[RMDB]
RNA sequence: GGGAACGACUCGAGUAGAGUCGAAAACGCAUGAGGCUGGUUUUACAGAGCAGUGAACACUUCCUUCUCUUGACAGUGGAGGGAUCACAGGCUGCAGUAUUCUUGGCUUAUAUGGCCUGGUGAGCCUACUCUGGUACGUGUUCGCACGUACCAGAGUAAAAGAAACAACAACAACAAC
Reactivity to 2A3 in 0.01 (KOAc 150mM, MgCl2 10mM, bicine 150mM(pH8.5), 24C), signal-to-noise 3, nucleotides 027 to 126: c050g000c040a030u060g030a010g040g010c000u010g020g060u010u020u040u060a020c020a010g120a030g050c010a020g000u030g100a110a010c030a020c070u050u030c000c000u020u030c030u010c000u080u220g190a090c050a150g010u030g070g040a010g000g000g000a010u060c030a020c010a040g080g000c010u080g030c030a030g030u020a040u050u010c030u070u070g010g020c030u070u010a040u030a030u240g020g000c020c010u030g120g000u040g040a010g030c000c010u020
Reactivity to DMS in 0.01 (KOAc 150mM, MgCl2 10mM, bicine 150mM(pH8.5), 24C), signal-to-noise 2, nucleotides 027 to 126: c040g030c080a020u020g000a030g000g010c030u000g000g030u000u000u020u030a070c020a080g030a010g030c080a050g010u000g010a060a150c120a070c140u000u010c000c000u000u010c030u000c040u000u040g020a190c300a090g020u000g010g020a020g010g000g000a030u040c010a040c100a100g020g000c000u020g000c080a110g020u020a040u000u020c050u020u010g030g040c020u000u000a060u020a050u030g000g000c040c020u000g000g020u020g000a090g000c010c000u010
The record gives the reactivity of an RNA of 177 nucleotides to 2A3 and DMS.
Source: RMDB libraries RFM100 and RFMREP, as collected in RNAgym.
2A3 adducts were read by reverse transcription with SuperScript II with manganese.
Reactivities are given for positions 27 through 126.